[RMDB]
RNA sequence: GGGAACGACUCGAGUAGAGUCGAAAAGGACAACGCUUCGGCGUUGUCCAAACGCUCAACCUCACAGCGCAAGAGUCGAACGAAUACAGUUCGACAUGAGGAAAAUCUCCCUCUUCGGAGGGAGAAACUCAAGGUAUGUGUUCGCACAUACCUUGAGAAAAGAAACAACAACAACAAC
Reactivity to 2A3 in 0.01 (KOAc 150mM, MgCl2 10mM, bicine 150mM(pH8.5), 24C), signal-to-noise 2, nucleotides 027 to 126: g000g000a010c000a000a020c020g020c020u060u080c210g130g000c000g000u000u010g000u010c000c000a000a000a010c000g010c000u030c050a130a090c000c010u050c000a000c010a050g010c080g050c190a220a050g040a000g150u010c000g000a000a000c000g000a100a040u290a210c130a100g030u000u010c000g000a000c000a010u020g000a000g000g000a030a030a000a050u000c000u000c000c000c020u010c010u030u060c170g070g000a000g000g000g020a000g000a000a010a000
Reactivity to DMS in 0.01 (KOAc 150mM, MgCl2 10mM, bicine 150mM(pH8.5), 24C), signal-to-noise 2, nucleotides 027 to 126: g000g010a020c000a000a010c000g000c000u000u020c160g030g030c010g040u000u000g010u010c000c020a020a040a030c020g030c000u000c040a110a150c020c020u020c000a170c300a000g000c010g000c100a180a070g000a070g000u000c000g020a010a000c000g010a150a090u030a140c200a040g010u000u010c010g000a020c010a000u010g020a010g040g000a060a120a050a120u000c010u000c000c000c000u000c000u000u010c160g000g010a000g010g000g010a010g000a000a000a090
The record gives the reactivity of an RNA of 177 nucleotides to 2A3 and DMS. Conditions: 150 mM KOAc, 10 mM MgCl2 and 150 mM bicine (pH 8.5), 24 C. 2A3 is a SHAPE reagent: it acylates the 2'-hydroxyl of flexible nucleotides of all four kinds. High DMS reactivity at an A or C suggests that its Watson-Crick edge is free.